[RMDB]
RNA sequence: GGGAACGACUCGAGUAGAGUCGAAAAGAUAUGGACUACCCACCCUUACUACCCACCUCGGAUAUCGGAAACGAUAUCACGAGAGGUAAGGAGGUCCUAAGUCAAAACGUUGGCUUCGGCCAACGAACAACGUUUGAUCGUUCGCGAUCAAACGUUGAAAAGAAACAACAACAACAAC
Reactivity to 2A3 in 0.01 (KOAc 150mM, MgCl2 10mM, bicine 150mM(pH8.5), 24C), signal-to-noise 2, nucleotides 027 to 126: g040a000u120a070u130g020g010a030c030u220a250c040c000c020a040c000c000c010u000u050a050c020u060a070c030c080c020a090c030c000u000c010g000g000a000u000a010u010c010g040g020a060a050a030c000g030a000u000a000u000c020a020c010g000a000g020a010g010g000u000a000a020g010g010a000g000g040u030c000c040u070a240a040g210u110c050a030a050a140a150c010g000u010u000g010g000c030u050u060c300g080g050c040c000a000a000c000g020a010a010
Reactivity to DMS in 0.01 (KOAc 150mM, MgCl2 10mM, bicine 150mM(pH8.5), 24C), signal-to-noise 2, nucleotides 027 to 126: g000a050u000a100u000g000g030a010c000u000a080c000c010c010a300c120c000c000u000u000a010c000u000a040c040c040c080a300c110c000u010c000g010g000a040u000a000u000c000g020g000a090a140a190c000g000a010u000a000u000c010a090c000g000a000g000a010g030g020u000a000a010g010g000a070g010g030u000c000c000u010a060a150g010u010c060a110a080a080a160c010g000u000u000g000g000c020u000u000c240g050g050c000c000a010a010c010g000a040a130
Source: RMDB library TTRDEL, as collected in RNAgym. The record gives the reactivity of an RNA of 177 nucleotides to 2A3 and DMS. The 2A3 profile rests on 2,273 reads. For DMS, 995 sequencing reads were counted.